[RMDB]
RNA sequence: GGGAACGACUCGAGUAGAGUCGAAAAUCCUGAAACGGAGCGCGAUACAGGGUGACAGCCCCGUAUCACGGACCAGUACGACGUGCGUCAGCUCCAGAGUAGCGGGGGUUGGAAAUCCCUCGUGAAUAUGUACUUACUUGUUCGCAAGUAAGUACAUAAAAGAAACAACAACAACAAC
Reactivity to DMS in 0.01 (KOAc 150mM, MgCl2 10mM, bicine 150mM(pH8.5), 24C), signal-to-noise 4, nucleotides 027 to 126: u000c000c000u010g020a060a060a130c110g000g010a040g020c010g030c130g020a020u000a020c010a050g010g020g020u000g010a170c300a110g000c010c000c000c010g010u000a010u000c020a130c040g000g010a030c040c050a150g000u010a090c180g010a050c150g020u000g020c080g020u000c040a210g000c000u000c000c000a120g010a140g010u000a170g000c000g000g000g000g000g020u000u000g010g020a210a080a080u000c000c000c000u000c020g020u000g000a080a080u010
Reactivity to 2A3 in 0.01 (KOAc 150mM, MgCl2 10mM, bicine 150mM(pH8.5), 24C), signal-to-noise 4, nucleotides 027 to 126: u010c000c000u020g080a110a050a010c090g020g000a000g020c050g010c020g020a010u010a010c010a050g030g000g020u060g180a070c050a050g060c020c000c000c000g000u000a010u010c020a010c030g030g020a010c000c040a040g080u120a070c180g100a040c090g090u090g060c030g020u070c050a020g000c010u000c000c010a030g030a020g060u040a000g010c000g000g000g000g010g030u020u060g080g100a030a060a040u040c000c000c000u000c000g000u000g000a010a010u060